[RMDB]
The data come from the RNA Mapping Database (RMDB), library OK1LIB. An RNA of 177 nucleotides, treated with DMS and 2A3 and read out base by base. Reactivities are given for positions 27 through 126. Conditions: 150 mM KOAc, 10 mM MgCl2 and 150 mM bicine (pH 8.5), 24 C. For 2A3 the reverse transcriptase was SuperScript II with manganese.
RNA sequence: GGGAACGACUCGAGUAGAGUCGAAAAAGUUUUAGUAAAUGAAUAAUUCAUUAGACAUCAAAGAUGUAACUACAUUUUAUGAGGAAGACAAACAUUUAAUCUUUGGUUAUACACCAACGUGUGGUACCUCCUCCGAUAAUUUCGAUUAUCGGAGGAGAAAAGAAACAACAACAACAAC
Reactivity to DMS in 0.01 (KOAc 150mM, MgCl2 10mM, bicine 150mM(pH8.5), 24C), signal-to-noise 2, nucleotides 027 to 126: a010g000u000u020u000u010a030g020u020a050a020a010u000g000a060a230u030a070a050u060u000c000a070u010u010a050g000a100c080a050u000c010a000a010a010g030a010u000g010u030a020a050c190u020a200c010a080u010u020u000u020a030u000g000a060g000g000a050a050g000a130c180a040a020a060c130a040u000u020u010a050a100u000c100u000u020u000g000g020u000u000a050u010a020c070a020c010c050a020a100c200g010u000g020u030g000g010u000a040c150
Reactivity to 2A3 in 0.01 (KOAc 150mM, MgCl2 10mM, bicine 150mM(pH8.5), 24C), signal-to-noise 4, nucleotides 027 to 126: a000g030u110u100u100u120a070g050u120a060a140a050u040g050a020a080u230a300a090u110u000c010a030u040u100a070g060a100c050a010u000c050a140a040a020g010a000u040g030u130a070a090c060u100a030c130a110u040u080u120u130a170u120g080a080g140g060a080a040g060a040c030a050a160a000c020a060u110u150u140a060a080u060c020u030u020u030g010g000u040u070a120u070a140c020a000c040c000a060a030c110g080u120g010u040g120g080u050a040c010